[RMDB]
RNA sequence: GGGAACGACUCGAGUAGAGUCGAAAAUUCGGGCGAACUGAUUCAUAGUAAAAUCUACAAAGGGGGGCCGAAGAAGCAAACCGGAAAAGUGGCAGUUUUUCCGUGGAAACUGACAGGCAAAAAGGAAUACUAAUUUAGACUUCGGUCUAAAUUAGUAAAAAGAAACAACAACAACAAC
Reactivity to 2A3 in 0.01 (KOAc 150mM, MgCl2 10mM, bicine 150mM(pH8.5), 24C), signal-to-noise 3, nucleotides 027 to 126: u060u020c030g000g000g030c020g030a090a020c070u040g020a070u120u060c050a070u090a020g040u060a040a060a090a120u060c020u060a050c090a060a140a090g030g010g000g000g020g000c000c000g020a050a020g020a040a000g010c030a030a030a070c010c010g010g080a020a040a030a030g090u080g090g020c050a040g020u000u000u000u000u000c010c000g020u050g010g030a050a030a000c020u040g070a020c020a050g050g000c030a020a080a010a020a000g090g010a040a040
Reactivity to DMS in 0.01 (KOAc 150mM, MgCl2 10mM, bicine 150mM(pH8.5), 24C), signal-to-noise 5, nucleotides 027 to 126: u010u010c050g000g020g020c050g010a150a120c080u000g010a070u010u010c080a110u020a080g000u010a070a070a070a060u030c030u010a060c100a060a110a130g020g010g030g000g000g010c020c000g010a030a070g010a110a090g000c070a070a130a150c140c010g000g000a020a020a050a070g030u000g000g010c080a080g010u010u000u000u000u000c010c030g000u020g010g010a050a080a090c030u020g000a080c090a060g000g010c070a010a030a060a100a080g000g000a100a160